[RMDB]
This 177-nucleotide RNA was probed chemically with DMS and 2A3. The reactions ran in a buffer of 150 mM KOAc, 10 mM MgCl2 and 150 mM bicine (pH 8.5), at 24 C. For DMS the reverse transcriptase was MarathonRT.
RNA sequence: GGGAACGACUCGAGUAGAGUCGAAAACUAGUGGUUCCUGUGGUUCACACCGAAGGCCGCGAAGCUAGGAAGAAAAAGAUAGAAAAGCUGGGUAAGACUCACCUGGCGACUCGUCGUCGAGGUCGACGUUAUCAUAGCAGUUCGCUGCUAUGAUAACAAAAGAAACAACAACAACAAC
Reactivity to DMS in 0.01 (KOAc 150mM, MgCl2 10mM, bicine 150mM(pH8.5), 24C), signal-to-noise 4, nucleotides 027 to 126: c020u000a040g020u000g000g000u010u000c030c010u010g020u010g010g010u000u010c160a140c100a080c060c070g030a150a100g010g000c050c020g010c060g000a060a140g010c030u010a040g010g010a120a100g020a040a070a060a090a110g010a110u010a070g000a080a040a120a140g010c020u000g010g010g020u000a070a150g000a150c100u010c080a050c020c020u000g000g020c010g010a070c100u000c080g020u000c120g000u000c030g010a080g000g010u000c040g000a060c160
Reactivity to 2A3 in 0.01 (KOAc 150mM, MgCl2 10mM, bicine 150mM(pH8.5), 24C), signal-to-noise 4, nucleotides 027 to 126: c020u010a010g030u010g100g050u030u120c000c000u040g020u120g020g040u130u130c080a050c010a010c120c040g040a090a060g030g000c030c010g000c010g030a050a000g000c030u040a010g050g060a060a070g090a080a170a030a040a030g100a080u220a040g090a050a140a000a020g020c020u040g040g000g010u090a120a040g060a190c020u020c080a000c020c000u000g010g000c020g010a020c010u030c030g040u010c020g070u010c000g040a030g010g070u040c030g030a030c070